[RMDB]
RNA sequence: GGGAACGACUCGAGUAGAGUCGAAAAAGAUACUUCCGGUAACUAGGAGUUUGUAGUGACGUAAGUUUAGUCCUAAGAGGACUCAUCAGGUAGCCUAAUAGACUACGACUUACGCGGUAGGUCGUGAGUAUUUUACGGAGUUCGCUCCGUAAAAUACAAAAGAAACAACAACAACAAC
Reactivity to DMS in 0.01 (KOAc 150mM, MgCl2 10mM, bicine 150mM(pH8.5), 24C), signal-to-noise 3, nucleotides 027 to 126: a080g010a070u010a080c060u000u010c020c010g010g010u010a100a060c060u010a070g010g010a140g030u000u000u000g020u000a020g020u010g020a250c030g000u000a010a060g010u000u000u000a040g000u000c030c020u000a100a110g010a150g000g000a050c010u000c050a100u010c170a070g030g020u000a040g010c020c010u000a090a100u010a050g000a030c030u000a010c040g010a020c030u000u010a010c000g010c090g000g020u000a040g000g010u010c020g000u010g010a120
Reactivity to 2A3 in 0.01 (KOAc 150mM, MgCl2 10mM, bicine 150mM(pH8.5), 24C), signal-to-noise 2, nucleotides 027 to 126: a010g100a050u170a170c000u070u040c010c000g000g080u050a040a020c020u020a010g100g020a050g130u090u100u260g130u030a100g020u010g050a030c020g010u020a000a070g000u000u010u090a020g000u020c010c010u040a120a090g100a070g050g000a050c000u000c030a090u030c000a000g180g000u070a010g000c010c030u070a130a060u040a060g030a020c030u030a020c020g010a000c030u020u020a040c100g010c020g130g030u020a010g030g020u020c020g030u020g020a050
Annotation:
Source: RMDB library VIROID, as collected in RNAgym. An RNA of 177 nucleotides, treated with DMS and 2A3 and read out base by base. For DMS the reverse transcriptase was MarathonRT. For DMS, 2,801 sequencing reads were counted. 2A3 adducts were read by reverse transcription with SuperScript II with manganese.